[RMDB]
RNA sequence: GGGAACGACUCGAGUAGAGUCGAAAAUCCACUAUGAAUCUAGUCACUAAAUAAACACAAUUAGCUACUGUGUGUAAUAGUGAGUAUUGAUAACACAAAAUAAUAGUAUAGUUUUGGAAGAUUAUACGCGCCCUUGCUCCGUUCGCGGAGCAAGGAAGCUCCUUCUUGUGUUCGCACAAGAAGGAGCAAAAGAAACAACAACAACAAC
Reactivity to 2A3 in 0.01 (KOAc 150mM, MgCl2 10mM, bicine 150mM(pH8.5), 24C), signal-to-noise 2, nucleotides 027 to 156: u010c010c000a060c080u230a160u160g150a060a060u040c000u020a020g040u000c000a000c000u010a030a010a020u040a020a060a010c000a010c000a080a060u110u100a040g080c090u180a090c040u020g000u000g010u010g030u030a000a030u000a050g000u010g000a000g010u050a010u000u120g030a020u130a220a050c020a020c030a070a110a140a000u190a110a080u100a150g000u010a010u000a050g010u030u040u070u170g120g030a050a030g000a020u010u000a010u020a030c030g030c000g050c020c000c000u000u000g000c000u020c000c000g050u050u030c090g010c010g120g010a000g000c010a000a000g000g000a000a010